Source: RMDB library TTRDES, as collected in RNAgym. The record gives the reactivity of an RNA of 177 nucleotides to DMS. The reactions ran in a buffer of 150 mM KOAc, 10 mM MgCl2 and 150 mM bicine (pH 8.5), at 24 C. Reactivities are given for positions 27 through 126.
[RMDB]
RNA sequence: GGGAACGACUCGAGUAGAGUCGAAAAGAUAUGGACCUUGUAGGCCGAUAAGACGGUGUCGGAAACGACACCCGUCUUUUGACGGCUGAGGAGGUCCUAAGUCAAAACGCAGGCUUCGGCCUGCGAACUAUGGAGGGUUCUUCGGAACCCUCCAUAGAAAAGAAACAACAACAACAAC
Reactivity to DMS in 0.01 (KOAc 150mM, MgCl2 10mM, bicine 150mM(pH8.5), 24C), signal-to-noise 2, nucleotides 027 to 126: g000a040u000a300u010g020g020a010c000c000u010u010g000u000a300g000g000c020c000g020a220u000a020a010g000a000c000g010g030u000g000u000c000g000g000a140a070a170c020g010a050c000a000c080c050c060g020u000c000u000u010u000u010g030a300c160g000g000c000u020g000a300g000g010a010g000g010u000c000c010u010a000a100g010u000c020a090a030a120a190c030g000c010a000g010g010c010u000u010c230g060g000c010c000u000g010c000g000a030a100